[RMDB]
RNA sequence: GGGAACGACUCGAGUAGAGUCGAAAAAGAAGGACUAAUGUUAGGAGACCCUGUGGACACCUUGACAUACACGUUUUAUGCUCUUUUUCCAUGAAGAUAAUGAACUCGAGACCAGAGCAUCCAUGGAUUAGUCAUAACCAGUCAUCCAUCGCAGUACACUGAAUAGUCUCUUCGGAGACUAUUCAGUAAAAGAAACAACAACAACAAC
Reactivity to 2A3 in 0.01 (KOAc 150mM, MgCl2 10mM, bicine 150mM(pH8.5), 24C), signal-to-noise 3, nucleotides 027 to 156: a000g100a050a010g060g010a010c020u080a080a040u080g050u080u090a050g010g060a100g040a060c020c050c040u080g050u140g050g010a020c020a030c070c010u010u050g010a000c010a030u180a030c070a030c130g040u050u070u070u040a070u070g020c020u020c000u040u090u020u050u030c010c010a030u060g070a060a040g030a050u140a160a070u210g040a100a060c010u000c050g070a070g060a100c050c080a040g000a010g010c010a010u000c010c010a010u020g010g000a010u030u060a030g040u040c010a010u020a040a050c040c000a010g050u030c010a030u030c040c000a040u070c030g000c080a010g100u130a030c020
Reactivity to DMS in 0.01 (KOAc 150mM, MgCl2 10mM, bicine 150mM(pH8.5), 24C), signal-to-noise 3, nucleotides 027 to 156: a110g010a090a100g010g000a090c010u000a050a070u000g010u000u000a100g030g000a120g010a080c040c020c020u000g030u020g020g010a140c090a120c060c020u000u010g060a040c020a100u020a130c080a110c100g000u000u000u000u000a040u010g000c100u000c000u000u000u000u010u000c000c040a080u010g000a070a080g000a140u010a060a110u000g000a060a040c020u010c020g020a180g030a170c120c070a090g020a060g030c020a250u000c030c030a080u000g020g000a030u000u000a030g010u000c040a060u000a030a040c090c000a100g030u000c040a060u010c010c020a090u000c050g000c030a090g020u010a100c120